RNA sequence: GGGAACGACUCGAGUAGAGUCGAAAACAUGCAGGCGCAGCAGCUGCCCUACGAGUUUUUCAGCGAAGAGAACGCGCCCAAGUGGCGGGGACUACUGGUGCCUGCGCUGAAAAAGGUGAGGAGCACGCGAUUGGAGAGUGUUCGCACUCUCCAAUCGAAAAGAAACAACAACAACAAC
Reactivity to 2A3 in 0.01 (KOAc 150mM, MgCl2 10mM, bicine 150mM(pH8.5), 24C), signal-to-noise 1, nucleotides 027 to 126: c020a040u160g040c030a000g040g020c000g000c040a060g020c000a000g010c040u140g070c010c020c000u120a110c100g130a160g150u090u040u000u020u000c050a040g020c030g130a160a000g000a070g060a130a010c030g000c020g080c050c000c020a250a050g110u190g120g000c000g000g000g000g020a030c010u070a020c030u140g120g050u080g090c000c000u010g000c000g030c020u060g040a070a030a040a030a040g120g020u180g070a050g060g040a090g080c020a010c000g060
Reactivity to DMS in 0.01 (KOAc 150mM, MgCl2 10mM, bicine 150mM(pH8.5), 24C), signal-to-noise 2, nucleotides 027 to 126: c050a080u000g010c030a040g040g010c060g040c030a100g010c070a070g000c110u000g020c010c010c000u010a100c140g030a150g010u000u000u000u000u000c010a120g020c130g000a130a090g000a110g000a030a170c070g000c060g010c010c010c050a100a120g020u000g010g020c030g000g000g000g000a190c010u000a060c050u010g020g030u000g010c020c010u000g010c010g000c030u000g000a000a040a010a060a050g000g020u000g000a050g000g020a060g010c020a010c180g000